Structure probing data (2A3 and DMS) for a 177-nucleotide construct. Conditions: 150 mM KOAc, 10 mM MgCl2 and 150 mM bicine (pH 8.5), 24 C.

[RMDB]
RNA sequence: GGGAACGACUCGAGUAGAGUCGAAAACACACGUGGAACGAUGUAUGAACCCGCGCGGACCACCGCGCAAGGCUAAAUACUAGUUGGCGACCGAUAGUGAACAAGUACCGCGAGGGAAAGGUGAAAAGACGAUCGAGUGAUUCGUCACUCGAUCGUCAAAAGAAACAACAACAACAAC
Reactivity to 2A3 in 0.01 (KOAc 150mM, MgCl2 10mM, bicine 150mM(pH8.5), 24C), signal-to-noise 2, nucleotides 027 to 126: c000a020c030a020c020g090u060g040g040a060a000c000g040a000u130g000u030a000u020g010a020a030c000c000c000g000c000g000c010g000g000a120c000c040a300c150c000g000c000g000c040a000a000g000g070c000u000a040a000a030u030a010c010u020a000g010u010u000g050g000c000g020a010c000c050g070a070u120a080g140u130g100a120a020c040a070a020g020u040a070c000c000g000c080g040a080g000g060g040a080a020a000g050g010u050g000a000a000a000a030
Reactivity to DMS in 0.01 (KOAc 150mM, MgCl2 10mM, bicine 150mM(pH8.5), 24C), signal-to-noise 2, nucleotides 027 to 126: c300a040c130a200c120g020u010g000g000a110a050c000g000a140u070g020u040a020u010g020a030a210c240c010c020g030c000g000c000g000g000a170c300c300a140c000c000g010c010g000c030a000a000g000g000c000u000a110a100a020u030a000c030u020a300g000u000u000g000g050c000g000a150c030c050g000a090u020a080g010u060g020a030a070c000a020a120g000u010a230c050c020g050c150g010a100g000g000g000a060a090a000g000g000u020g000a050a080a120a090